[RMDB]
RNA sequence: GGGAACGACUCGAGUAGAGUCGAAAAGAUUAUGUGGGAGAGGCGCCCUUUCGUUUCCUCGGAUAAUUAAUUGCCAGUCGCUGGCUUUAGCGAUCUUGAUGUCAUCUGUAGCGAUGACUAUGCUACCUUAAGGUAUGAUCCGGAUACCGCCGGUAAACGUCGAUCAUAAUUUCGAUUAUGAUCGACGAAAAGAAACAACAACAACAAC
Reactivity to 2A3 in 0.01 (KOAc 150mM, MgCl2 10mM, bicine 150mM(pH8.5), 24C), signal-to-noise 3, nucleotides 027 to 156: g010a030u110u120a050u210g140u050g040g000g000a160g030a020g070g010c040g010c060c020c000u000u100u070c040g010u010u010u030c000c000u040c020g010g000a040u030a060a090u160u110a020a110u110u180g010c020c020a040g040u050c020g000c050u030g050g060c060u160u160u100a000g010c020g000a010u020c050u040u130g070a060u130g020u000c010a000u000c040u040g210u240a040g040c040g050a010u000g000a000c000u010a050u080g010c010u040a040c000c020u090u170a110a070g010g010u060a020u140g040a060u040c050c030g000g000a010u040a070c010c030g050c000c000g020g000u070a000a120a000
Reactivity to DMS in 0.01 (KOAc 150mM, MgCl2 10mM, bicine 150mM(pH8.5), 24C), signal-to-noise 1, nucleotides 027 to 156: g020a130u000u000a100u000g050u000g020g010g010a170g030a080g000g010c050g010c120c020c050u000u000u010c070g000u000u000u000c000c010u020c000g050g010a070u010a070a060u000u000a100a090u010u010g000c030c010a110g000u000c020g030c010u000g040g030c090u000u000u000a030g020c050g000a030u000c040u010u000g000a170u000g010u000c010a030u000c000u010g030u010a180g000c110g020a030u000g000a070c010u000a050u000g000c050u000a020c040c040u000u000a040a140g010g020u000a020u010g010a090u000c050c050g000g010a150u000a040c030c030g020c060c090g060g000u000a040a060a180
The record gives the reactivity of an RNA of 207 nucleotides to 2A3 and DMS. The RNA was probed in 150 mM KOAc, 10 mM MgCl2 and 150 mM bicine (pH 8.5) at 24 C. Reactivities are rounded to 0.1 and cut off at 0 and 3.